Chemical mapping of a 177-nucleotide RNA with DMS and 2A3. The RNA was probed in 150 mM KOAc, 10 mM MgCl2 and 150 mM bicine (pH 8.5) at 24 C.
[RMDB]
RNA sequence: GGGAACGACUCGAGUAGAGUCGAAAAUUCGCGUAGGCAAAAAUGGUGAGGUCAGCCGACUUGGCGGAGGAACGCAGCCAACAAAGGUAACUGCGACUGGCGAAGGCACGUAGCCAACAAGCAGUUACCUUAACACGAAGUUCGCUUCGUGUUAAGGAAAAGAAACAACAACAACAAC
Reactivity to DMS in 0.01 (KOAc 150mM, MgCl2 10mM, bicine 150mM(pH8.5), 24C), signal-to-noise 9, nucleotides 027 to 126: u010u010c050g010c050g020u010a060g010g010c070a030a050a070a090a080u020g010g010u000g010a120g000g010u010c050a110g010c020c030g010a090c100u010u010g000g010c030g000g010a090g010g010a080a070c090g000c070a150g010c030c040a070a090c210a060a060a030g000g010u000a000a010c000u000g000c000g000a140c220u000g000g000c010g010a150a150g010g010c080a050c110g000u010a280g000c000c000a010a050c130a080a240g000c000a010g000u000u000a010
Reactivity to 2A3 in 0.01 (KOAc 150mM, MgCl2 10mM, bicine 150mM(pH8.5), 24C), signal-to-noise 9, nucleotides 027 to 126: u070u040c020g000c020g060u080a060g050g020c060a040a020a030a040a100u120g030g020u070g030a050g010g040u050c030a020g020c020c010g040a090c050u060u120g050g000c010g020g040a040g040g040a050a000c040g000c050a020g020c010c010a030a030c050a060a150a000g030g010u020a010a000c000u000g000c010g050a050c040u010g000g000c020g050a090a060g110g050c070a020c140g040u040a010g000c000c010a010a030c050a080a020g010c000a000g000u000u000a000
It was measured as part of the RMDB libraries RFM100 and RFMREP.